[RMDB]
RNA sequence: GGGAACGACUCGAGUAGAGUCGAAAAAGCACAGCCGGACGGCCAUACGCUGGCGCGGCUGUGGGGGGCGCUGCCGCCGGAUAUCCGGUUAAGCCCGCAUCUUUACCUGGCGACCAACAGCGCACAGCCGACUUGAGACAUUCGUGUCUCAAGUCGGAAAAGAAACAACAACAACAAC
Reactivity to 2A3 in 0.01 (KOAc 150mM, MgCl2 10mM, bicine 150mM(pH8.5), 24C), signal-to-noise 1, nucleotides 027 to 126: a000g080c010a030c000a020g000c010c010g150g300a160c100g250g030c000c030a070u130a120c280g060c120u030g000g010c020g000c010g030g000c000u000g000u000g000g000g000g000g000g000c010g010c010u020g020c010c000g030c020c000g050g010a130u080a030u140c100c000g000g000u030u180a040a030g070c000c000c040g000c010a090u100c000u130u180u040a100c000c030u080g000g000c000g000a030c010c070a060a010c000a000g020c020g040c020a030c000a090g060
Reactivity to DMS in 0.01 (KOAc 150mM, MgCl2 10mM, bicine 150mM(pH8.5), 24C), signal-to-noise 1, nucleotides 027 to 126: a090g000c020a040c000a010g010c010c000g020g000a170c020g020g000c000c080a070u010a170c250g030c100u000g020g020c080g020c000g010g020c010u000g020u000g010g010g000g050g010g000c040g010c030u000g020c030c020g000c000c010g000g000a110u020a030u000c140c010g000g000u020u010a110a230g030c240c030c000g010c240a050u010c210u010u000u000a010c060c030u000g010g010c030g020a080c130c050a050a160c050a000g000c000g000c010a070c050a160g020

Chemical mapping of a 177-nucleotide RNA with 2A3 and DMS. For 2A3, 1,050 sequencing reads were counted. Values cover nucleotides 27 to 126. Source: RMDB library OK2TRN, as collected in RNAgym.